[RMDB]
RNA sequence: GGGAACGACUCGAGUAGAGUCGAAAAAGAUAAGGCGCUUACGUCGGCAUACAACAGCUUGAUACUGACCUCAUCAAGCAAAGGAAACAAUCACAUCGCGCUUGGAUGCACGAUGUACAUGAGGUUGGGGCUAGGACUGUUUCGACAGUCCUAGCCCAAAAGAAACAACAACAACAAC
Reactivity to 2A3 in 0.01 (KOAc 150mM, MgCl2 10mM, bicine 150mM(pH8.5), 24C), signal-to-noise 1, nucleotides 027 to 126: a000g110a010u120a000a060g050g030c030g030c070u070u070a060c020g050u000c010g010g070c070a100u120a070c020a010a000c010a050g020c000u020u020g000a000u040a100c000u010g000a000c010c000u000c010a030u010c000a000a000g000c000a130a020a000g180g040a160a130a010c110a080a100u110c040a030c000a030u060c000g000c000g000c040u050u090g250g100a220u220g000c000a000c000g030a000u000g000u040a030c070a030u160g000a020g000g000u010u030g020